Notes
The record gives the reactivity of an RNA of 207 nucleotides to 2A3.

RNA sequence: GGGAACGACUCGAGUAGAGUCGAAAAACUGACGGUACGCCGUCAGAACGGUAGAUAAGAUGGUUUGAAAACCACGCCUUCUACCAAUAUAGUAAAUAAAUAGGCGGAGCGGUCAUACGUGACCGCAAAAACAUCCUUGGCUUCGGCCAAGGAUGAACCCUAAUUUUGUCUUCGGACAAAAUUAGGGAAAAGAAACAACAACAACAAC
Reactivity to 2A3 in 0.01 (KOAc 150mM, MgCl2 10mM, bicine 150mM(pH8.5), 24C), signal-to-noise 2, nucleotides 027 to 156: a000c000u010g000a000c000g020g000u030a030c150g090c030c000g010u000c000a000g000a050a000c040g000g010u000a000g010a040u040a030a010g140a230u040g020g110u040u090u110g220a180a210a000a000c000c000a010c000g000c000c010u000u020c000u000a000c000c000a020a000u120a010u020a030g080u040a010a020a140u060a040a160a060u130a040g010g020c010g020g020a020g000c010g000g010u020c000a010u010a110c210g070u040g000a000c000c000g000c000a030a000a000a000a000c000a000u000c000c000u000u010g000g010c010u050u020c160g100g000c000c000a000a000g000g000a000u000g000a000a000